[RMDB]
RNA sequence: GGGAACGACUCGAGUAGAGUCGAAAACGAUCAGUCUUCGGACUGAUCGAAAUAAACUUGACAAAGGCCGGUCAAGAAAAACGGCAUAAUAAGAUAGCUGAAAAAGUGGCGGGUUCGCCCGCCACAAUCAUCUAGAAACGUUCGCGUUUCUAGAUGAAAAAGAAACAACAACAACAAC
Reactivity to 2A3 in 0.01 (KOAc 150mM, MgCl2 10mM, bicine 150mM(pH8.5), 24C), signal-to-noise 1, nucleotides 027 to 126: c010g000a020u010c010a000g010u000c000u040u090c210g100g010a000c010u020g000a000u000c000g000a010a000a000u040a000a040a010c010u020u020g010a000c030a020a150a030g240g160c030c020g020g000u030c030a030a010g100a090a020a010a010a020c020g010g000c020a040u010a140a030u040a030a230g120a160u160a060g030c010u030g070a040a000a000a100a080g010u010g000g020c000g010g000g000u030u020c180g000c000c010c020g020c010c010a000c000a000a000
Reactivity to DMS in 0.01 (KOAc 150mM, MgCl2 10mM, bicine 150mM(pH8.5), 24C), signal-to-noise 1, nucleotides 027 to 126: c020g010a000u000c000a020g000u000c000u000u000c160g030g020a020c000u010g000a000u000c010g000a010a090a110u010a120a060a160c000u000u000g010a020c000a100a110a130g000g080c040c000g040g020u010c000a000a100g020a080a060a020a080a080c040g000g010c000a090u010a110a080u000a120a120g010a170u000a070g020c030u000g000a070a040a160a120a130g020u000g000g020c000g010g000g010u020u020c280g010c000c000c020g000c000c000a010c000a020a050
Conditions: 150 mM KOAc, 10 mM MgCl2 and 150 mM bicine (pH 8.5), 24 C. Chemical mapping of a 177-nucleotide RNA with 2A3 and DMS. For DMS, 1,004 sequencing reads were counted. For 2A3 the reverse transcriptase was SuperScript II with manganese.